[RMDB]
Notes:
Source: RMDB library OK2TST, as collected in RNAgym. This 177-nucleotide RNA was probed chemically with DMS and 2A3. Conditions: 150 mM KOAc, 10 mM MgCl2 and 150 mM bicine (pH 8.5), 24 C. The 2A3 profile rests on 9,156 reads.

RNA sequence: GGGAACGACUCGAGUAGAGUCGAAAAACUGCCAGGUGGAAAGGCCUCGUGCAGCACCUGGCAGCCGGCGAUCUUAGGCCACAUAACUUGACGAACCGGAUCGUCGGUCAUGUUCGUCACUAGUUGAAUUUAAAUAAUGGUUCGCCAUUAUUUAAAUAAAAGAAACAACAACAACAAC
Reactivity to DMS in 0.01 (KOAc 150mM, MgCl2 10mM, bicine 150mM(pH8.5), 24C), signal-to-noise 8, nucleotides 027 to 126: a150c020u000g000c000c000a010g010g010u000g010g010a070a080a100g010g010c000c010u010c300g010u010g010c020a090g010c000a010c000c000u000g000g010c010a010g010c010c010g010g000c000g000a010u000c010u000u010a120g020g000c040c030a090c190a090u010a090a040c060u000u010g020a020c010g000a030a030c010c180g000g000a010u000c000g020u000c020g000g000u000c120a010u000g010u000u000c010g010u000c000a100c300u010a050g000u000u000g010a180
Reactivity to 2A3 in 0.01 (KOAc 150mM, MgCl2 10mM, bicine 150mM(pH8.5), 24C), signal-to-noise 5, nucleotides 027 to 126: a000c020u010g000c010c000a010g010g010u010g050g140a180a090a060g080g000c020c010u210c170g130u260g010c010a080g160c000a010c000c000u010g000g000c000a000g000c000c000g000g000c010g000a000u000c010u090u200a110g110g000c030c000a050c010a070u270a120a050c040u040u090g010a010c000g010a050a010c020c000g000g010a010u000c010g010u010c000g000g000u000c000a010u080g010u000u020c010g020u020c010a020c090u080a060g120u050u080g070a090